[RMDB]
RNA sequence: GGGAACGACUCGAGUAGAGUCGAAAAUUAUUGAGCUGGCAGAGCAGGCGGAAAAGGUUCUAAACCGGAUGCAUACCGCUACCCACGAACUCCGCGAGCUUCUUGAUGCAGACAAGGUUAGCGGAGCUACCGAAUGCGCGAUUGCAAACGCUAGCGGUCCUCAUACAUCGUUCGCGAUGUAUGAGGAAAAAGAAACAACAACAACAAC
Reactivity to DMS in 0.01 (KOAc 150mM, MgCl2 10mM, bicine 150mM(pH8.5), 24C), signal-to-noise 1, nucleotides 027 to 156: u010u000a090u000u040g020a090g050c020u000g030g060c020a120g000a140g070c000a040g070g020c000g030g000a080a050a190a180g000g000u000u020c110u020a080a130a090c050c110g010g050a130u010g030c080a080u010a070c020c000g030c020u000a050c020c010c070a140c010g010a070a070c010u000c030c050g050c010g000a050g000c040u020u010c030u020u020g000a210u000g020c090a180g010a150c030a080a060g020g060u000u000a050g000c010g060g000a070g000c000u000a050c030c070g010a150a170u000g010c080g000c010g000a180u000u000g020c060a070a020a190c030g000c040u000a030g020c000g020g050
Reactivity to 2A3 in 0.01 (KOAc 150mM, MgCl2 10mM, bicine 150mM(pH8.5), 24C), signal-to-noise 2, nucleotides 027 to 156: u170u070a030u050u110g070a020g000c020u020g030g020c000a000g000a010g050c030a010g020g000c040g020g050a030a000a010a040g140g000u240u090c100u240a150a030a000c040c040g000g020a040u080g000c010a020u090a110c000c060g050c010u030a050c020c000c000a030c080g000a020a000c010u020c010c000g020c000g020a010g000c000u150u040c000u100u010g030a120u200g090c060a020g020a090c030a020a000g000g010u050u050a000g000c000g000g000a000g000c000u060a050c000c050g040a140a050u040g000c050g000c020g110a100u000u260g000c020a000a020a240c020g010c030u030a010g010c000g010g000